[RMDB]
Background: Conditions: 150 mM KOAc, 10 mM MgCl2 and 150 mM bicine (pH 8.5), 24 C. An RNA of 207 nucleotides, treated with 2A3 and read out base by base. The 2A3 profile rests on 464 reads. 2A3 adducts were read by reverse transcription with SuperScript II with manganese.
RNA sequence: GGGAACGACUCGAGUAGAGUCGAAAAGCGCUCCUGAACGUGACUUCAGAAGAGGGGCGGCGACAAGUUAGAUUGUCGAGGCGACAAAUUGGUCAGUCUGGGCAAUCUAACUGACCAAUCGCCGCCGCGUUGAGUCACGUCAACAACCCUCGAGCGAGUGACGUGGCUAGUUCGCUAGCCACGUCACAAAAGAAACAACAACAACAAC
Reactivity to 2A3 in 0.01 (KOAc 150mM, MgCl2 10mM, bicine 150mM(pH8.5), 24C), signal-to-noise 1, nucleotides 027 to 156: g050c000g000c000u000c020c100u000g030a050a020c000g000u000g020a000c060u110u030c200a160g000a250a030g070a300g020g180g000g000c000g010g030c000g050a010c060a090a000g000u000u000a000g000a000u000u000g000u000c050g020a020g000g010c000g020a010c000a000a300a300u270u200g090g000u000c150a150g000u000c030u110g000g000g020c040a000a000u000c000u000a000a000c000u000g000a000c000c110a050a110u010c020g000c010c000g000c020c010g060c000g050u060u160g000a000g050u020c000a000c000g000u000c000a050a020c000a030a210c000c000c000u080c010g000a020g000c040g020a020